[RMDB]
RNA sequence: GGGAACGACUCGAGUAGAGUCGAAAAUGCUUACAAUGGCAAUAUUAACAUACCCAAUGCUGAAGUUCUUCUUGUCAGUGAAAUUGAUUGGCUCAAAAGGAUUAGGGAUAAUGUUAAAAACACAGGUGAAACAGGUGUCGAAGAGCCAAUACUGGAACUGGCAUUAUCAUUUCGAUGAUAAUGCCAGAAAAGAAACAACAACAACAAC
Reactivity to 2A3 in 0.01 (KOAc 150mM, MgCl2 10mM, bicine 150mM(pH8.5), 24C), signal-to-noise 1, nucleotides 027 to 156: u020g000c000u080u060a150c130a100a210u160g030g000c000a000a050u090a080u220u080a070a050c060a050u100a080c000c000c000a040a060u100g000c010u060g030a070a100g060u050u080c010u110u010c010u110u120g030u030c000a010g010u020g150a080a100a090u110u080g030a010u010u000g030g000c000u020c040a020a020a110a080g090g020a040u080u100a050g040g020g000a030u070a170a030u150g010u020u100a040a060a010a040a010c040a000c010a020g080g050u090g040a060a070a020c030a030g000g060u020g020u030c070g060a100a070g010a020g010c000c030a000a010u040a080c010u020g020g010a060a050
Reactivity to DMS in 0.01 (KOAc 150mM, MgCl2 10mM, bicine 150mM(pH8.5), 24C), signal-to-noise 2, nucleotides 027 to 156: u020g020c050u000u000a150c180a040a110u010g000g090c030a060a070u000a130u000u000a060a160c070a090u010a140c000c010c010a120a200u000g010c020u010g040a060a300g000u000u000c050u000u000c010u010u010g030u000c030a050g060u000g000a020a020a040u000u000g040a090u000u000g010g030c000u010c020a070a070a000a120g020g000a100u000u000a110g000g020g000a060u020a080a050u010g020u000u000a040a040a130a100a060c030a080c020a170g000g040u000g000a110a130a110c070a110g020g010u000g010u000c020g020a040a140g000a050g000c020c000a040a050u000a140c040u000g010g000a100a220
Chemical mapping of a 207-nucleotide RNA with 2A3 and DMS. The data come from the RNA Mapping Database (RMDB), library OK3TST. For 2A3, 1,187 sequencing reads were counted. The reactions ran in a buffer of 150 mM KOAc, 10 mM MgCl2 and 150 mM bicine (pH 8.5), at 24 C.